The record gives the reactivity of an RNA of 170 nucleotides to DMS and 2A3.
RNA sequence: GGGAACGACUCGAGUAGAGUCGAAAAUCCGGAGCUCCUUCUCGAGAUCCUCAGCUUUUUUCCUUGAGUUCACCCACUGCUCGAGGACGUCUUCCCUUCCCCCGCGAUUCUUCUUCGACUCGGCCCGUGCGGCGGGACUUCGGUCCCGCCAAAAGAAACAACAACAACAAC
Reactivity to DMS in 0.01 (KOAc 150mM, MgCl2 10mM, bicine 150mM(pH8.5), 24C), signal-to-noise 4, nucleotides 027 to 129: u070c040c040g060g020a280g090c060u040c030c020u010u030c020u000c140g040a170g000a080u010c030c000u070c000a080g010c040u110u000u000u110u040u040c130c000u040u010g000a090g020u000u000c110a130c000c000c000a300c120u050g020c020u000c000g090a030g010g020a000c080g070u040c190u010u030c000c050c060u010u000c050c030c000c030c020g060c080g030a080u010u030c040u030u080c050u030u010c060g000a070c090u020c040g010g060c020c030c020g020u030g010c110
Reactivity to 2A3 in 0.01 (KOAc 150mM, MgCl2 10mM, bicine 150mM(pH8.5), 24C), signal-to-noise 2, nucleotides 027 to 129: u010c000c000g040g020a000g000c000u010c000c000u090u100c050u020c020g090a080g000a040u060c000c000u030c000a060g050c050u000u110u090u020u010u050c000c040u020u050g040a050g050u030u020c050a070c000c000c000a020c060u090g020c010u000c010g010a010g010g050a090c000g000u000c060u070u030c010c000c010u000u000c000c020c000c020c000g020c000g010a030u020u000c000u000u000c000u040u020c010g010a010c040u030c000g050g000c030c000c000g010u000g040c000
The data come from the RNA Mapping Database (RMDB), library 15KLIB. Conditions: 150 mM KOAc, 10 mM MgCl2 and 150 mM bicine (pH 8.5), 24 C. For 2A3 the reverse transcriptase was SuperScript II with manganese.